[RMDB]
RNA sequence: GGGAACGACUCGAGUAGAGUCGAAAAGAUAUGGAUCCCACGGACAUGGUCAAUCGGAAACGAUUGGCCAACAGCCGUCGGGAUCCUAAGUCAAACAGAUUACGCACCUUCGGGUGCGUAAUCUGAAGUACGGAAGAUUCUUCGGAAUCUUCCGUACAAAAGAAACAACAACAACAAC
Reactivity to DMS in 0.01 (KOAc 150mM, MgCl2 10mM, bicine 150mM(pH8.5), 24C), signal-to-noise 1, nucleotides 027 to 126: g000a010u010a250u020g010g010a010u010c000c000c010a030c000g000g000a090c140a170u000g010g000u000c000a030a010u010c020g000g000a100a030a150c000g010a020u000u000g000g010c000c000a000a000c300a100g000c010c000g000u000c160g060g010g000a000u000c010c010u000a000a030g010u000c020a150a140a230c000a010g010a010u000u000a000c000g020c010a010c010c010u000u020c210g020g030g020u000g020c010g000u000a000a000u000c000u000g000a020a100

Record summary:
This 177-nucleotide RNA was probed chemically with DMS. For DMS the reverse transcriptase was MarathonRT. For DMS, 945 sequencing reads were counted. Conditions: 150 mM KOAc, 10 mM MgCl2 and 150 mM bicine (pH 8.5), 24 C. Source: RMDB library TTRDEL, as collected in RNAgym.